[RMDB]
The record gives the reactivity of an RNA of 177 nucleotides to DMS and 2A3.
Reactivities are rounded to 0.1 and cut off at 0 and 3.
It was measured as part of the RMDB library M2PK90.
2A3 is a SHAPE reagent: it acylates the 2'-hydroxyl of flexible nucleotides of all four kinds.
2A3 adducts were read by reverse transcription with SuperScript II with manganese.
RNA sequence: GGGAACGACUCGAGUAGAGUCGAAAAACAAAAUGUGGAGUGACGUGGGCCUCUGCAAGAAGCGACCAAAACCUGGAGGAGGAUGGUACACUGGGGGGAGCCGAUACCCAGGACAGGGCAGAAAAAACAUAAACCUUAAGUUCGCUUAAGGUUUAUGAAAAGAAACAACAACAACAAC
Reactivity to DMS in 0.01 (KOAc 150mM, MgCl2 10mM, bicine 150mM(pH8.5), 24C), signal-to-noise 4, nucleotides 027 to 126: a110c070a060a030a090a080u010g010u000g000g010a080g020u000g000a070c070g020u000g010g010g010c060c020u000c030u000g000c060a050a080g010a090a060g000c070g010a110c060c050a040a030a080a090c060c040u000g010g000a090g000g010a070g020g020a040u000g010g020u000a040c100a040c070u000g000g000g000g000g000g000a070g010c020c040g000a090u010a080c020c010c020a080g010g010a080c080a050g000g000g010c090a060g010a010a050a050a060a050a100
Reactivity to 2A3 in 0.01 (KOAc 150mM, MgCl2 10mM, bicine 150mM(pH8.5), 24C), signal-to-noise 2, nucleotides 027 to 126: a000c080a000a110a030a070u120g010u040g050g010a030g030u090g030a030c070g020u100g020g060g000c020c010u030c000u020g000c010a010a060g090a060a000g050c030g030a040c050c000a000a050a070a120c030c020u040g050g010a030g040g010a010g030g000a070u060g020g020u060a040c060a020c140u050g000g010g000g000g010g010a000g010c000c000g000a000u070a070c010c010c020a000g020g000a010c030a030g010g030g000c050a010g110a040a060a010a000a000a000